[RMDB]
RNA sequence: GGGAACGACUCGAGUAGAGUCGAAAAAUCAGGCAAAGAGGAAGGACGGCUACAAUGGAGGAGUCUCCUACCACGCUUGUGGUCGUCACUGUAGUGCUCAGUUGAAUGGUGUGUCCAUUGGGGUUGGAGUCCCCAUCCUGUUCUGGGUCCUGGCCCAACUGAGCCUAUUAUUCGUAAUAGGCUCAGUAAAAGAAACAACAACAACAAC
Reactivity to DMS in 0.01 (KOAc 150mM, MgCl2 10mM, bicine 150mM(pH8.5), 24C), signal-to-noise 2, nucleotides 027 to 156: a120u000c020a050g020g000c060a050a100a110g000a070g000g010a210a100g020g010a050c030g010g000c000u000a020c030a050a050u010g000g010a110g000g000a220g020u000c070u000c040c010u000a120c020c020a060c060g010c160u020u000g020u000g020g010u000c020g020u000c010a040c030u010g040u000a090g010u000g040c050u010c010a060g010u000u020g020a100a080u000g000g000u000g020u000g020u000c030c020a170u000u000g000g000g000g000u010u000g020g010a300g000u000c040c010c020c010a030u000c000c020u000g000u000u000c060u000g030g010g030u010c010c060u000g000g000c010c010c000a090
Reactivity to 2A3 in 0.01 (KOAc 150mM, MgCl2 10mM, bicine 150mM(pH8.5), 24C), signal-to-noise 4, nucleotides 027 to 156: a010u040c010a010g030g010c050a080a100a070g090a060g050g040a070a040g070g000a010c020g000g020c010u020a020c020a020a080u080g020g010a050g040g020a110g170u080c120u090c050c020u140a300c020c010a070c100g190c090u050u020g000u010g000g000u000c010g000u010c010a010c070u030g020u040a060g090u030g060c020u000c030a040g020u070u070g180a110a060u070g000g040u080g020u050g050u110c060c040a060u040u070g030g000g000g000u060u050g090g020a050g090u090c010c000c000c000a000u050c010c020u070g040u120u040c040u030g010g000g040u030c010c050u060g030g000c020c000c000a000